[RMDB]
Overview:
Source: RMDB libraries RFM100 and RFMREP, as collected in RNAgym. Structure probing data (DMS and 2A3) for a 177-nucleotide construct. DMS adducts were read by reverse transcription with MarathonRT. As a SHAPE reagent, 2A3 marks flexible, mostly unpaired nucleotides at the ribose 2'-OH.
RNA sequence: GGGAACGACUCGAGUAGAGUCGAAAAAUCGCAAAGACGCCGAGGUCACCCACGCAACCCACAUCGCACGCUUGGUCACUCGGGGUCCGUGCUAGCGGGCGGCGAACCGGACAUUGUCCGGGACGCCGGAACUCUCUACUUUCGAGUAGAGAGUUCCAAAAGAAACAACAACAACAAC
Reactivity to DMS in 0.01 (KOAc 150mM, MgCl2 10mM, bicine 150mM(pH8.5), 24C), signal-to-noise 4, nucleotides 027 to 126: a070u030c050g020c040a080a100a090g000a070c030g000c020c010g000a030g030g000u010c140a110c120c000c040a040c070g000c080a110a100c050c050c060a050c120a080u000c090g010c040a100c090g050c030u000u010g010g000u010c080a120c020u010c000g000g000g020g000u010c020c120g020u000g010c050u010a130g010c020g000g000g000c050g030g030c010g010a010a270c000c000g000g010a000c010a170u040u010g010u000c000c000g010g010g000a040c000g000c000c020
Reactivity to 2A3 in 0.01 (KOAc 150mM, MgCl2 10mM, bicine 150mM(pH8.5), 24C), signal-to-noise 8, nucleotides 027 to 126: a000u070c020g000c030a080a100a040g040a030c050g040c100c010g020a010g050g030u120c050a060c020c010c000a010c040g040c010a050a120c000c050c010a060c020a140u100c060g010c040a020c030g020c020u050u070g040g000u060c030a020c090u020c020g000g000g020g010u010c040c020g040u050g020c010u010a020g030c030g020g020g020c000g010g000c000g000a010a010c000c000g000g020a010c080a300u220u300g010u010c000c000g000g000g000a000c000g000c000c000